[RMDB]
RNA sequence: GGGAACGACUCGAGUAGAGUCGAAAAAAAAGAUAUGGACGCUGUGAGCGAGGAUCGUAUGGGUCGGGGUACAUCGGAAACGAUGUACAAGGACCAUACGGGAGCUCCCAGCGUCCUAAGUCAAAAAGUACAGUAUGAUCUUCGGAUCAUACUGUACAAAAGAAACAACAACAACAAC
Reactivity to 2A3 in 0.01 (KOAc 150mM, MgCl2 10mM, bicine 150mM(pH8.5), 24C), signal-to-noise 2, nucleotides 027 to 126: a000a000a000a000g040a030u040a020u060g000g010a000c000g000c000u000g030u020g000a000g010c000g090a300g040g010a000u000c020g020u000a000u010g210g070g120u300c300g130g060g040g000u010a000c010a000u010c010g030g000a010a010a010c010g000a000u020g020u010a010c000a000a000g180g020a010c000c000a000u000a000c000g000g000g000a000g000c000u000c000c030c000a020g020c000g010u000c000c000u010a000a000g010u000c000a070a000a020a010a010
Reactivity to DMS in 0.01 (KOAc 150mM, MgCl2 10mM, bicine 150mM(pH8.5), 24C), signal-to-noise 2, nucleotides 027 to 126: a050a060a170a080g020a030u010a170u020g000g010a030c010g020c000u000g000u000g000a010g020c000g010a070g020g000a080u010c000g000u010a000u000g000g000g010u010c040g020g010g020g030u000a000c000a010u010c000g000g010a030a030a080c000g030a010u020g010u010a000c000a030a050g010g000a140c000c000a000u000a010c000g020g000g000a020g000c000u000c000c080c000a010g020c010g000u000c010c010u000a000a040g000u000c000a090a080a100a100a080

The record gives the reactivity of an RNA of 177 nucleotides to 2A3 and DMS. For 2A3, 5,273 sequencing reads were counted. Values cover nucleotides 27 to 126.